[RMDB]
RNA sequence: GGGAACGACUCGAGUAGAGUCGAAAAGCAAAUCACCAUCGGCCAAAGCGGCGCAACAGCCAAUAUAGCCGGCGGGCGUUGUCGUGACGAAACUAUCGAGGAUCUUGCGGAUGGUUUUGGGUUCCGCAUCAGCAGUGCAGUUCGCUGCACUGCUGAUAAAAGAAACAACAACAACAAC
Reactivity to DMS in 0.01 (KOAc 150mM, MgCl2 10mM, bicine 150mM(pH8.5), 24C), signal-to-noise 1, nucleotides 027 to 126: g010c120a030a070a010u010c100a070c000c010a030u000c100g000g010c000c050a090a090a180g030c300g000g010c000g010c220a070a120c270a170g000c030c010a010a300u000a030u000a200g000c050c000g000g000c010g030g000g000c270g000u000u000g010u000c060g000u070g000a230c070g000a160a010a000c020u010a020u000c040g000a010g000g000a060u000c070u020u000g000c000g060g000a040u040g000g000u000u000u000u000g010g000g030u010u000c000c010g000c070
Reactivity to 2A3 in 0.01 (KOAc 150mM, MgCl2 10mM, bicine 150mM(pH8.5), 24C), signal-to-noise 2, nucleotides 027 to 126: g060c000a070a030a050u130c010a000c060c000a000u010c040g000g190c080c000a160a000a080g090c020g010g090c010g000c040a040a180c010a170g000c000c000a060a070u180a020u050a120g060c080c070g010g040c000g020g030g000c120g000u000u060g060u030c020g000u060g060a040c110g070a030a000a000c080u020a100u170c050g030a040g020g020a060u020c040u060u300g170c020g030g000a050u050g080g020u030u000u050u040g000g090g040u040u000c000c000g010c000
Description:
The record gives the reactivity of an RNA of 177 nucleotides to DMS and 2A3. The data come from the RNA Mapping Database (RMDB), library OK1LIB. Reactivities are given for positions 27 through 126. The 2A3 profile rests on 548 reads. For 2A3 the reverse transcriptase was SuperScript II with manganese. Conditions: 150 mM KOAc, 10 mM MgCl2 and 150 mM bicine (pH 8.5), 24 C. As a SHAPE reagent, 2A3 marks flexible, mostly unpaired nucleotides at the ribose 2'-OH.